[RMDB]
The record gives the reactivity of an RNA of 207 nucleotides to DMS and 2A3. The reactions ran in a buffer of 150 mM KOAc, 10 mM MgCl2 and 150 mM bicine (pH 8.5), at 24 C. For 2A3 the reverse transcriptase was SuperScript II with manganese. The 2A3 profile rests on 2,808 reads.
RNA sequence: GGGAACGACUCGAGUAGAGUCGAAAAGAUCUGCGCCGAUCCGAAACGCUAGCAAACAGCCCGCAUCAUGUCGUCUCCUAACUCCGACGUGGUGAAAUACUGAGCUUAUGCGAGUAAGCCUGUUAGCAAUAGAUCAGAACGUUCGCGUUCUGAUCAACCGUAUGUGCAUGUUCGCAUGCACAUACGGAAAAGAAACAACAACAACAAC
Reactivity to DMS in 0.01 (KOAc 150mM, MgCl2 10mM, bicine 150mM(pH8.5), 24C), signal-to-noise 1, nucleotides 027 to 156: g020a050u000c010u010g010c030g020c040c020g000a170u000c000c080g000a090a090a050c080g000c000u000a010g010c040a100a080a070c130a120g020c030c020c130g060c060a050u000c010a000u000g000u000c000g000u010c020u010c090c060u010a100a070c000u000c020c010g000a040c000g030u030g000g000u010g000a050a150a130u010a060c000u000g000a080g010c020u020u000a100u000g020c150g000a120g040u000a050a140g000c010c060u000g000u010u000a040g040c040a010a180u000a060g000a000u010c000a030g040a010a010c000g040u000u000c240g060c020g070u010u020c000u010g010a000u000c000a030a040
Reactivity to 2A3 in 0.01 (KOAc 150mM, MgCl2 10mM, bicine 150mM(pH8.5), 24C), signal-to-noise 4, nucleotides 027 to 156: g020a050u000c020u070g020c050g030c050c030g030a070u030c040c020g040a080a050a020c060g000c040u050a030g010c020a090a080a090c020a090g050c000c000c020g000c000a010u000c000a000u030g010u000c010g060u030c060u090c120c050u080a140a100c040u040c040c000g000a010c000g010u010g000g020u010g030a060a010a010u190a030c060u060g020a040g040c000u030u020a030u150g080c040g040a060g060u030a030a010g000c000c030u040g020u070u040a010g020c040a110a180u070a190g000a000u010c010a000g010a010a000c000g010u050u040c160g000c000g090u000u020c020u000g010a000u000c000a000a000